The record gives the reactivity of an RNA of 177 nucleotides to 2A3 and DMS. For 2A3, 784 sequencing reads were counted. DMS adducts were read by reverse transcription with MarathonRT. Values cover nucleotides 27 to 126. The RNA was probed in 150 mM KOAc, 10 mM MgCl2 and 150 mM bicine (pH 8.5) at 24 C.

RNA sequence: GGGAACGACUCGAGUAGAGUCGAAAAUUGUAUCUUCGGGGCAGGGUGGAAAUCCCGACCGGCGGUAGUAAAGCACAUUUGCUUUAGAGCCCGUGACCCGUGUGCAUAAGCACGCGGUGGAUUCAGUAAAGCAUUUGUGUUUCGACACAAAUGCUUUAAAAGAAACAACAACAACAAC
Reactivity to 2A3 in 0.01 (KOAc 150mM, MgCl2 10mM, bicine 150mM(pH8.5), 24C), signal-to-noise 2, nucleotides 027 to 126: u050u030g050u040a020u020c000u050u110c020g000g000g000g130c030a070g080g050g000u040g040g000a000a020a100u110c010c000c010g000a000c000c000g010g000c000g010g000u040a100g180u000a020a000a000g010c000a090c030a300u280u300u180g010c000u000u000u010a040g010a000g080c000c000c000g000u050g060a010c030c000c000g000u000g000u000g000c090a140u070a300a140g000c000a000c000g000c010g030g000u060g010g060a060u070u030c050a000g020u000
Reactivity to DMS in 0.01 (KOAc 150mM, MgCl2 10mM, bicine 150mM(pH8.5), 24C), signal-to-noise 4, nucleotides 027 to 126: u000u010g010u020a060u000c020u010u010c000g000g000g000g040c060a210g020g020g010u010g010g020a090a130a100u030c010c000c020g000a050c030c000g010g020c010g020g010u000a070g000u000a030a020a010g020c000a060c300a160u010u050u020g000c000u000u000u000a050g000a300g010c180c010c000g010u010g000a130c120c010c020g050u000g010u000g020c000a180u060a080a130g010c000a000c000g020c010g000g000u010g000g000a140u000u000c110a110g010u000